The record gives the reactivity of an RNA of 177 nucleotides to 2A3 and DMS. DMS adducts were read by reverse transcription with MarathonRT. Source: RMDB libraries RFM100 and RFMREP, as collected in RNAgym. The reactions ran in a buffer of 150 mM KOAc, 10 mM MgCl2 and 150 mM bicine (pH 8.5), at 24 C. 2A3 adducts were read by reverse transcription with SuperScript II with manganese.
RNA sequence: GGGAACGACUCGAGUAGAGUCGAAAAGACUGAAGAAAUUCAGACAUCCCGCAACCUGCGAUUAUCGCAAGGUCAAGGCAAAGUCCGGUAAUGGCGUUCUGAAUACCAGAGAUAAUUCUCUGGCGAAUAUAAGCAGCAAGUUCGCUUGCUGCUUAUAAAAAGAAACAACAACAACAAC
Reactivity to 2A3 in 0.01 (KOAc 150mM, MgCl2 10mM, bicine 150mM(pH8.5), 24C), signal-to-noise 3, nucleotides 027 to 126: g000a010c000u020g000a010a000g030a070a110a040u020u000c000a000g060a070c020a010u020c000c000c000g000c010a020a010c000c000u030g000c030g060a120u070u190a180u300c000g060c020a030a100g000g000u000c000a050a070g020g000c030a020a120a050g020u060c000c000g000g070u060a070a000u120g100g050c060g090u070u120c160u090g020a040a030u020a090c010c000a000g000a000g010a030u150a300a200u300u010c000u010c000u010g000g000c010g000a140a000
Reactivity to DMS in 0.01 (KOAc 150mM, MgCl2 10mM, bicine 150mM(pH8.5), 24C), signal-to-noise 4, nucleotides 027 to 126: g010a110c020u000g000a010a000g000a090a080a130u000u020c020a000g010a140c060a090u010c020c010c010g020c120a110a050c000c000u000g030c010g030a260u010u040a080u030c020g030c010a000a070g000g020u000c080a090a140g000g000c010a100a120a200g000u030c010c030g000g020u020a020a020u020g000g010c020g030u010u030c000u010g030a120a130u050a200c000c010a000g010a020g050a070u010a120a130u040u000c000u000c000u000g000g000c090g010a090a040